[RMDB]
RNA sequence: GGGAACGACUCGAGUAGAGUCGAAAAUACAAUAGCGUAGGGAACCAAGCUAAGAGGUAGGAAGUCCAACGGUAGAGGGCUUGGUUCGCAGCUGCUCUAGAAGAGGUCCCACUCCCUACGCCGCAAACGACGUAACUAUCUUCGGAUAGUUACGUCGAAAAGAAACAACAACAACAAC
Reactivity to 2A3 in 0.01 (KOAc 150mM, MgCl2 10mM, bicine 150mM(pH8.5), 24C), signal-to-noise 2, nucleotides 027 to 126: u240a050c040a020a130u040a110g000c020g020u000a000g000g010g020a010a010c030c010a070a000g010c000u120a090a020g020a000g170g100u130a020g100g160a110a030g050u050c040c010a120a000c060g140g020u130a100g030a150g100g000g000c000u000u040g040g000u030u020c010g000c000a000g020c010u000g010c000u000c010u050a090g050a180a000g010a100g010g000u030c010c030c000a010c030u000c000c010c010u000a000c000g000c030c000g090c040a060a100a010
Reactivity to DMS in 0.01 (KOAc 150mM, MgCl2 10mM, bicine 150mM(pH8.5), 24C), signal-to-noise 2, nucleotides 027 to 126: u050a110c080a060a160u010a050g000c010g040u000a040g000g000g020a050a080c030c040a060a110g000c030u000a040a140g000a060g000g030u000a040g000g010a100a110g020u000c000c050a030a070c140g010g000u010a050g030a210g010g000g000c000u000u000g000g000u000u000c110g000c150a050g000c040u000g000c000u040c020u000a070g010a070a070g010a140g010g000u000c010c000c040a170c050u000c000c010c000u000a000c010g000c010c090g020c150a020a070a100